[RMDB]
RNA sequence: GGGAACGACUCGAGUAGAGUCGAAAAAACGACCUUGGACAUAUGAUCCGCGAAUUCAUCAGAAUUUUUGUGAUAAAGAUCGGUAACGGAUUUACUGCUGGAGUAUUGUAAUGCCUUAGCAAGCACGCUAGACGUAAACCAAAUCUGCCCAUUAUGAUAUCAUCACCGUUUUCGAACGGUGAUGAUAAAAAGAAACAACAACAACAAC
Reactivity to 2A3 in 0.01 (KOAc 150mM, MgCl2 10mM, bicine 150mM(pH8.5), 24C), signal-to-noise 2, nucleotides 027 to 156: a030a020c020g010a030c000c010u010u100g030g010a010c000a020u170a090u120g050a060u030c020c030g000c010g030a070a070u080u050c030a110u060c080a130g120a170a100u030u100u040u140u230g060u030g080a070u130a090a050a010g090a140u060c120g010g010u050a090a020c010g020g060a020u040u000u150a080c040u050g000c010u030g000g000a030g010u050a010u100u030g050u020a130a060u090g000c010c030u000u050a030g010c040a100a000g060c050a010c040g000c040u010a030g020a020c010g090u110a090a000a000c010c000a000a080a010u010c050u020g000c030c000c000a040u120u140a100u300g020a020
Reactivity to DMS in 0.01 (KOAc 150mM, MgCl2 10mM, bicine 150mM(pH8.5), 24C), signal-to-noise 1, nucleotides 027 to 156: a050a090c010g000a090c020c000u000u010g010g010a160c020a110u000a080u020g020a040u000c010c070g000c040g000a100a150u000u000c060a120u000c050a130g030a090a080u000u000u010u000u010g010u020g000a150u000a140a050a080g010a070u010c090g020g000u000a090a100c050g000g000a060u010u010u000a040c050u000g000c000u000g000g000a060g040u000a060u000u000g030u000a110a100u020g000c000c030u030u000a110g020c050a050a070g010c090a060c070g000c040u010a040g000a030c110g000u000a030a080a070c050c020a020a070a060u000c060u000g010c010c030c010a120u010u010a060u010g000a290